Source: RMDB library OK1LIB, as collected in RNAgym. Structure probing data (DMS and 2A3) for a 177-nucleotide construct. DMS adducts were read by reverse transcription with MarathonRT. The reactions ran in a buffer of 150 mM KOAc, 10 mM MgCl2 and 150 mM bicine (pH 8.5), at 24 C. For 2A3 the reverse transcriptase was SuperScript II with manganese. For DMS, 7,458 sequencing reads were counted.
RNA sequence: GGGAACGACUCGAGUAGAGUCGAAAAUGACCCGCAUGUCUGGCAGCGCGGUAAGCAGGUCUUCCAGGGUUGGGAUCGACUGCCCCGCACCCAGCUGCGCCUUGCGGACAUCACGCCAAUCCAACCGGAAUUAUCAGCGAUUCGUCGCUGAUAAUUCAAAAGAAACAACAACAACAAC
Reactivity to DMS in 0.01 (KOAc 150mM, MgCl2 10mM, bicine 150mM(pH8.5), 24C), signal-to-noise 4, nucleotides 027 to 126: u000g000a150c130c000c000g010c030a030u020g010u030c150u010g000g000c020a020g010c030g040c030g000g000u000a060a120g000c020a000g000g000u010c030u000u000c000c010a080g010g010g030u020u000g010g000g000a040u020c150g000a030c020u000g000c010c040c010c010g000c010a100c140c060c140a190g000c010u020g000c000g020c040c000u000u010g000c030g010g000a150c090a130u010c030a070c090g020c050c050a080a080u050c040c030a060a060c070c120g010
Reactivity to 2A3 in 0.01 (KOAc 150mM, MgCl2 10mM, bicine 150mM(pH8.5), 24C), signal-to-noise 9, nucleotides 027 to 126: u070g060a050c000c000c010g010c010a030u070g060u190c120u100g170g010c030a020g010c020g000c010g060g000u040a070a010g000c010a020g110g180u010c000u030u010c020c010a080g190g060g040u170u110g050g010g000a030u080c110g030a040c010u020g000c000c020c010c030g010c010a050c010c060c010a020g000c010u000g000c010g170c010c010u020u040g010c000g010g030a030c000a030u050c020a020c060g060c020c020a040a050u060c020c020a030a040c040c020g060